[RMDB]
RNA sequence: GGGAACGACUCGAGUAGAGUCGAAAAGAUAUGGAUCAGUCGGGAGCUCUUGGACUCGGAAACGAGUCUAGGAGCGAGGAUCGAGCUGAUCCUAAGUCAAAGCAAACACUGUUCGCAGUGUUUGCAAUCUUGUAAUAGUGUUCGCACUAUUACAAGAAAAAGAAACAACAACAACAAC
Reactivity to DMS in 0.01 (KOAc 150mM, MgCl2 10mM, bicine 150mM(pH8.5), 24C), signal-to-noise 7, nucleotides 027 to 126: g000a020u000a080u000g000g000a010u000c000a010g000u000c000g000g000g000a020g020c000u000c000u000u000g000g000a020c000u000c000g020g010a020a020a040c000g010a010g010u000c000u000a000g000g000a010g020c000g000a020g010g010a010u010c000g000a060g020c010u000g000a010u000c000c000u000a010a070g000u000c020a100a130a170g000c000a000a010a010c000a010c000u000g010u000u010c220g020c000a010g020u000g000u000u000u000g010c000a040a020
Reactivity to 2A3 in 0.01 (KOAc 150mM, MgCl2 10mM, bicine 150mM(pH8.5), 24C), signal-to-noise 3, nucleotides 027 to 126: g010a010u030a000u070g010g000a000u010c000a010g010u010c000g000g010g010a010g010c000u000c000u030u020g010g010a010c000u000c000g000g010a050a010a010c000g000a000g020u010c000u040a000g000g010a000g000c010g000a020g000g010a010u000c010g000a090g180c010u000g000a000u000c000c000u010a020a010g000u000c040a130a090a070g000c000a000a010a000c000a000c010u030g060u130u160c300g010c140a000g000u000g000u020u010u000g000c000a000a020